[RMDB]
RNA sequence: GGGAACGACUCGAGUAGAGUCGAAAAGAUAUGGAAAUCGCCAGGGAGCUUCACGUCGGAAACGACGUGAAAGCGACGAUCUGGUCGAUUUCCUAAGUCAAAAGUAGAGUGGUUCGCCACUCUACAACCAUCAGAUAAGGUUCGCCUUAUCUGAUGGAAAAGAAACAACAACAACAAC
Reactivity to DMS in 0.01 (KOAc 150mM, MgCl2 10mM, bicine 150mM(pH8.5), 24C), signal-to-noise 5, nucleotides 027 to 126: g000a040u010a300u000g010g000a010a020a010u000c010g010c010c000a020g000g000g010a030g010c000u000u000c000a000c000g020u000c000g000g010a100a080a220c000g010a010c000g010u000g000a010a020a040g040c000g000a100c300g000a030u010c000u000g000g010u010c010g010a000u000u000u000c000c000u000a010a070g010u000c030a090a090a130a170g000u000a000g000a020g010u000g010g010u000u010c270g020c010c000a010c000u000c000u010a000c000a080a170
Reactivity to 2A3 in 0.01 (KOAc 150mM, MgCl2 10mM, bicine 150mM(pH8.5), 24C), signal-to-noise 3, nucleotides 027 to 126: g020a020u060a040u140g020g000a000a010a020u010c000g010c010c000a020g000g030g030a060g000c000u010u010c010a000c000g000u020c000g010g020a080a070a060c010g000a000c020g020u020g000a000a030a000g000c000g020a070c040g010a050u010c010u010g000g000u060c040g000a000u010u000u000c000c000u000a030a010g030u010c020a060a030a090a130g010u010a000g000a000g000u010g080g050u070u150c300g100c090c000a000c000u000c000u000a000c000a000a020